[RMDB]
RNA sequence: GGGAACGACUCGAGUAGAGUCGAAAACUCAGUAGGAGGUUCGCCUCCUACUGAGAAAAGUUUCAUUACCCGUAUUAUUGCGGGUUAAUUGCGAGAAAAGGGAAAGCUAAGUUCGCUUAGCUUUCCCGGAUUAUUAAGGGUUCGCCCUUAAUAAUCCAAAAGAAACAACAACAACAAC
Reactivity to 2A3 in 0.01 (KOAc 150mM, MgCl2 10mM, bicine 150mM(pH8.5), 24C), signal-to-noise 1, nucleotides 027 to 126: c000u000c000a000g000u010a000g000g000a000g000g020u020u080c150g070c040c000u000c000c000u000a000c000u000g010a000g000a000a000a010a000g000u020u050u070c040a020u000u100a000c000c000c000g000u010a080u300u070a160u150u260g010c000g000g000g000u000u020a010a020u010u070g070c070g040a110g170a150a170a080a110g000g000g020a000a000a000g000c000u010a000a000g000u050u070c120g040c010u010u000a000g000c000u000u000u000c000c000c000
Reactivity to DMS in 0.01 (KOAc 150mM, MgCl2 10mM, bicine 150mM(pH8.5), 24C), signal-to-noise 4, nucleotides 027 to 126: c000u000c000a020g000u000a020g000g000a010g010g010u000u020c230g020c000c000u000c000c000u000a000c000u010g000a010g000a010a040a080a150g010u000u000u000c030a080u000u000a030c000c010c000g020u010a040u010u020a180u020u010g010c000g000g000g010u000u000a010a030u010u010g020c150g000a150g010a060a060a080a160g020g000g010a000a010a010g000c000u000a000a000g000u000u010c280g010c000u000u000a000g000c000u000u000u000c000c000c000